[RMDB]
RNA sequence: GGGAACGACUCGAGUAGAGUCGAAAAGCAGCAGGGUGCUAUCGGCUUCCGGCGCUGCCGGACGAUUGCGCGAGGCGCGUUCGACUUCGAUGUCGAGAUCGAUCUGCGAGCACAGGCCGAGCGUCAAAUUUAUGAGGCCAUUCGUGGCCUCAUAAAUAAAAGAAACAACAACAACAAC
Reactivity to DMS in 0.01 (KOAc 150mM, MgCl2 10mM, bicine 150mM(pH8.5), 24C), signal-to-noise 2, nucleotides 027 to 126: g010c000a160g040c010a070g050g020g010u000g010c010u000a020u000c010g030g000c160u010u010c010c000g000g000c000g030c270u010g040c000c010g010g000a070c040g000a040u000u000g010c000g030c010g020a170g000g000c010g010c040g010u000u000c000g010a040c000u000u010c050g000a100u010g010u000c020g000a040g010a110u000c010g000a050u000c000u000g000c030g010a080g010c040a080c100a080g010g010c050c040g000a090g000c060g000u000c100a040a120
Reactivity to 2A3 in 0.01 (KOAc 150mM, MgCl2 10mM, bicine 150mM(pH8.5), 24C), signal-to-noise 1, nucleotides 027 to 126: g010c130a010g000c010a010g170g150g000u020g000c000u010a020u020c010g000g090c100u160u040c020c010g020g000c300g130c270u290g000c020c010g000g000a000c000g020a020u020u080g020c020g000c020g090a080g050g000c000g000c020g000u010u010c000g000a020c010u100u090c080g030a040u190g050u050c030g000a000g030a190u020c010g000a040u000c000u030g090c000g030a010g050c050a030c020a040g050g070c030c020g060a020g000c030g090u080c070a090a200
Record summary
The data come from the RNA Mapping Database (RMDB), library OK2TST. Chemical mapping of a 177-nucleotide RNA with DMS and 2A3. 2A3 adducts were read by reverse transcription with SuperScript II with manganese.